[RMDB]
RNA sequence: GGGAACGACUCGAGUAGAGUCGAAAACGCAGUCGGGAGCCGCGGUGGCCACUGGUGUGUUGGGAAGCCUGUUUUCCCUUGCCGGCGGUAGCUUGGCCAAGAAACUGGGUAUCGGUGAUGCGGAUACAUCGUAUACGGCUUUCGAGCCGUAUACGAUAAAAGAAACAACAACAACAAC
Reactivity to 2A3 in 0.01 (KOAc 150mM, MgCl2 10mM, bicine 150mM(pH8.5), 24C), signal-to-noise 2, nucleotides 027 to 126: c050g020c030a050g100u050c030g020g080g050a080g010c010c030g070c070g040g010u010g080g000c010c010a020c010u000g020g030u080g000u030g060u110u070g000g000g000a020a000g010c020c010u060g130u040u020u020u040c040c000c000u020u130g000c010c000g020g020c000g000g070u070a030g010c020u050u130g020g020c020c000a000a010g070a000a130a010c010u010g010g120g000u090a030u070c020g000g000u070g040a080u100g190c030g070g010a000u010a060c050
Reactivity to DMS in 0.01 (KOAc 150mM, MgCl2 10mM, bicine 150mM(pH8.5), 24C), signal-to-noise 2, nucleotides 027 to 126: c100g010c030a050g020u000c030g000g030g010a150g020c040c060g020c150g010g010u000g010g010c030c030a060c050u010g010g020u000g030u000g010u010u000g020g010g000a050a080g000c100c140u000g010u010u000u010u000c020c000c000u000u000g010c030c010g020g010c060g000g000u010a100g010c030u000u010g040g010c040c050a080a120g000a050a070a050c050u010g010g010g010u010a050u020c030g000g020u000g000a130u010g000c030g020g000a090u000a040c110